[RMDB]
This 177-nucleotide RNA was probed chemically with 2A3 and DMS. The 2A3 profile rests on 1,695 reads. The data come from the RNA Mapping Database (RMDB), library TTRDEL. 2A3 is a SHAPE reagent: it acylates the 2'-hydroxyl of flexible nucleotides of all four kinds. For DMS the reverse transcriptase was MarathonRT. For 2A3 the reverse transcriptase was SuperScript II with manganese.
RNA sequence: GGGAACGACUCGAGUAGAGUCGAAAAGAUAUGGAUACUUGGGAGUAGCGCUCGGAAACGAGCGACCCUACGAGGAUCAAGAUCCUAAGUCAAAACCUAACCUCAAGGUUCGCCUUGAGGUUAGGAAUCUAUACAGGCGGUUCGCCGCCUGUAUAGAAAAAGAAACAACAACAACAAC
Reactivity to 2A3 in 0.01 (KOAc 150mM, MgCl2 10mM, bicine 150mM(pH8.5), 24C), signal-to-noise 1, nucleotides 027 to 126: g000a000u080a030u080g010g000a030u130a300c000u010u000g020g000g020a020g010u020a010g060c010g000c000u000c040g000g080a040a000a010c050g000a000g020c020g000a050c040c000c000u000a010c030g080a300g060g000a000u010c010a030a000g000a000u030c000c000u010a040a010g040u000c050a000a030a000a300c000c000u000a000a000c000c000u000c020a000a010g020g040u070u140c290g170c050c000u000u000g010a000g010g000u000u000a000g000g000a000a000
Reactivity to DMS in 0.01 (KOAc 150mM, MgCl2 10mM, bicine 150mM(pH8.5), 24C), signal-to-noise 2, nucleotides 027 to 126: g010a030u000a220u010g000g010a000u000a030c010u000u000g000g010g000a050g020u000a000g020c030g030c020u000c000g010g000a060a040a080c000g010a020g000c000g010a040c300c300c020u000a010c020g010a120g010g000a010u010c000a010a000g010a110u000c010c000u000a040a160g000u010c030a080a110a100a100c000c020u000a000a000c000c000u000c020a000a010g020g020u000u020c260g040c000c010u020u000g000a010g000g000u000u010a000g000g000a050a010